[RMDB]
RNA sequence: GGGAACGACUCGAGUAGAGUCGAAAAGAUAUGGAAAGCUUGGACCUUUGGGCACUUGGACCCUUCUAGGAAAGAUCGGAAACGAUCUUUCCUAGAAGGCUAGUGCAGAAGCUAGCUUUCCUAAGUCGAUACUUGGUUAGUUCGCUAACCAAGUAUCAAAAGAAACAACAACAACAAC
Reactivity to 2A3 in 0.01 (KOAc 150mM, MgCl2 10mM, bicine 150mM(pH8.5), 24C), signal-to-noise 3, nucleotides 027 to 126: g010a050u210a050u210g000g000a010a010a020g000c030u150u220g140g150a300c080c000u040u040u040g270g300g010c000a030c040u060u210g170g120a300c050c000c040u000u020c000u000a010g030g000a020a010a010g000a000u010c000g030g070a100a130a040c020g000a010u000c000u000u000u010c000c010u000a000g000a000a000g010g020c010u010a000g010u010g000c000a010g020a000a000g000c000u000a000g000c000u000u010u030c000c000u000a140a020g090u070c100
Reactivity to DMS in 0.01 (KOAc 150mM, MgCl2 10mM, bicine 150mM(pH8.5), 24C), signal-to-noise 4, nucleotides 027 to 126: g010a110u010a300u010g000g000a030a010a020g000c000u000u010g050g000a100c300c020u000u010u000g020g000g020c000a010c000u000u020g040g000a160c300c010c000u000u000c000u010a000g000g010a010a010a010g000a000u000c010g010g000a120a080a300c000g010a010u000c000u000u000u000c000c000u010a010g000a000a000g020g000c030u000a010g020u000g030c010a300g010a040a010g010c030u000a020g010c000u000u010u000c000c000u010a020a100g020u010c100
An RNA of 177 nucleotides, treated with 2A3 and DMS and read out base by base. Source: RMDB library TTRINS, as collected in RNAgym. For DMS, 4,191 sequencing reads were counted.